RNA sequence: GGGAACGACUCGAGUAGAGUCGAAAAGACGUGGAGGUUCCGCGCCCUCCUUUGCGCGUAAGUACGUCGAAAUUCGGUGCUUAGGAUCGCACCGUUCGAUCCAUUUGAUAUCCGCUUAGUGCCGCGGUUGGGCAUUUACACUUACCCGAAAGGGGAACGACCAUGAUCAUUUCGAUGAUCAUGGUCGAAAAGAAACAACAACAACAAC
Reactivity to 2A3 in 0.01 (KOAc 150mM, MgCl2 10mM, bicine 150mM(pH8.5), 24C), signal-to-noise 1, nucleotides 027 to 156: g050a000c010g020u040g000g020a030g060g010u070u050c020c000g050c040g000c020c000c020u220c010c030u080u010u080g070c000g000c000g040u050a060a060g040u050a030c000g010u030c040g020a000a000a060u070u080c010g000g000u000g000c060u080u130a070g030g110a150u150c010g000c000a070c000c000g000u070u020c000g000a020u000c000c070a080u010u180u100g180a110u000a080u030c020c020g000c030u030u180a020g060u030g080c020c000g020c070g130g050u070u050g020g000g010c020a000u000u010u100a030c050a030c000u030u110a010c000c000c020g030a010a020a000g040g000g000g020a000a000